[RMDB]
RNA sequence: GGGAACGACUCGAGUAGAGUCGAAAAGCGGGGCGCGGCGCGAGCGCGCGCCAGUCGAUGCGCUCAGCCAGCGACUCGGCAUAGCCCGGGCGCACCGCGUAGCAGUUGUAACGGUCGGUACCCUCCACCAUUAGGUAUGGUUCGCCAUACCUAAUGGAAAAGAAACAACAACAACAAC
Reactivity to DMS in 0.01 (KOAc 150mM, MgCl2 10mM, bicine 150mM(pH8.5), 24C), signal-to-noise 7, nucleotides 027 to 126: g000c010g010g010g010g020c030g040c050g020g010c050g000c180g000a020g020c040g020c010g030c030g000c030c200a050g010u010c010g010a060u010g020c020g010c010u000c010a220g020c020c040a110g020c030g000a070c010u000c010g010g010c030a160u010a150g000c080c010c010g010g010g010c040g010c040a090c020c010g010c040g000u010a100g010c070a100g000u000u000g010u000a080a120c120g000g000u000c020g010g000u000a130c020c000c010u000c060c050a220
Reactivity to 2A3 in 0.01 (KOAc 150mM, MgCl2 10mM, bicine 150mM(pH8.5), 24C), signal-to-noise 1, nucleotides 027 to 126: g030c010g010g000g040g050c050g010c050g010g010c040g020c110g040a020g010c050g010c020g000c040g010c030c040a000g060u100c000g040a130u100g000c010g000c030u010c050a010g020c010c020a030g010c020g190a240c010u000c010g000g000c030a120u200a050g030c010c030c010g000g020g010c020g000c010a030c020c020g000c020g010u040a030g060c080a070g030u190u170g080u130a080a050c030g020g030u040c030g000g030u130a080c020c000c000u040c030c010a070